[RMDB]
RNA sequence: GGGAACGACUCGAGUAGAGUCGAAAACUUGCGGUACAUGUGCCAGCUCAGCCGCAGACCCCAGGUCGACACCAACGCUAGUAGCAGCCAUCGGCGAACCGGGUCGCCGUGGCCGAGCGUCGCGGCGCCCCUGGGAUUGCUUCGGCAAUCCCAGGGGAAAAGAAACAACAACAACAAC
Reactivity to 2A3 in 0.01 (KOAc 150mM, MgCl2 10mM, bicine 150mM(pH8.5), 24C), signal-to-noise 2, nucleotides 027 to 126: c040u020u070g000c040g000g000u110a070c050a200u170g070u120g140c030c000a060g000c030u040c050a010g020c000c000g000c020a000g000a060c000c060c010c000a020g040g010u060c030g030a060c010a040c070c040a030a100c030g010c030u040a010g040u210a020g220c040a000g010c030c030a050u110c050g010g000c000g020a040a020c050c010g060g000g040u010c010g000c000c020g000u000g000g000c000c000g070a010g000c090g040u050c020g000c020g000g000c000g000
Reactivity to DMS in 0.01 (KOAc 150mM, MgCl2 10mM, bicine 150mM(pH8.5), 24C), signal-to-noise 1, nucleotides 027 to 126: c100u000u000g000c000g040g000u000a180c100a040u010g020u020g000c130c130a070g050c020u040c100a080g040c000c020g000c000a000g010a140c070c000c080c090a170g020g000u040c080g000a060c030a030c070c110a040a100c290g000c000u040a060g000u010a110g000c130a080g100c030c000a090u000c060g000g050c010g000a170a160c040c010g040g020g000u010c000g010c000c000g010u000g010g020c000c040g000a170g000c120g020u000c030g000c020g000g010c000g080
This 177-nucleotide RNA was probed chemically with 2A3 and DMS. Values are in units of 0.01, from 0 to 300, in steps of 10. The reactions ran in a buffer of 150 mM KOAc, 10 mM MgCl2 and 150 mM bicine (pH 8.5), at 24 C.